[RMDB]
RNA sequence: GGGAACGACUCGAGUAGAGUCGAAAAGAUAUGGAUAGGACCUUGGCAAUGAUGUCCGCGUCAUAUUAUAUUGUCGGAAACGACAAUAUAAUAUGACGCGGAUUGAGCCAGGUCACUAUCCUAAGUCCAUCUCGAAAUACUUCGGUAUUUCGAGAUGAAAAGAAACAACAACAACAAC
Reactivity to 2A3 in 0.01 (KOAc 150mM, MgCl2 10mM, bicine 150mM(pH8.5), 24C), signal-to-noise 1, nucleotides 027 to 126: g000a010u090a040u290g000g020a010u010a050g000g000a020c010c100u210u300g040g010c060a220a300u160g020a000u130g120u000c000c020g000c000g000u000c000a030u000a070u000u000a010u000a010u010u010g000u000c050g010g110a100a100a120c010g060a010c010a050a000u020a010u000a020a000u000a000u000g010a010c020g010c030g020g010a010u010u010g020a000g000c030c010a000g020g010u000c000a010c010u000a000u040c000c000u000a130a010g060u030c050
Reactivity to DMS in 0.01 (KOAc 150mM, MgCl2 10mM, bicine 150mM(pH8.5), 24C), signal-to-noise 1, nucleotides 027 to 126: g000a140u000a300u000g000g000a020u010a000g000g010a000c010c010u020u020g060g010c000a300a190u020g010a100u000g000u000c000c000g000c000g020u000c000a010u000a000u000u000a000u000a020u000u000g010u000c000g000g000a140a060a220c000g010a040c000a030a010u000a000u000a000a020u010a010u010g030a000c000g050c000g000g010a000u000u000g010a120g030c010c000a030g010g030u000c000a020c010u000a000u000c000c000u010a030a100g020u000c070
The data come from the RNA Mapping Database (RMDB), library TTRINS. Structure probing data (2A3 and DMS) for a 177-nucleotide construct. For DMS, 1,432 sequencing reads were counted. For DMS the reverse transcriptase was MarathonRT. High 2A3 reactivity points to a flexible backbone, as in loops and unpaired stretches. For 2A3, 1,814 sequencing reads were counted. Reactivities are given for positions 27 through 126.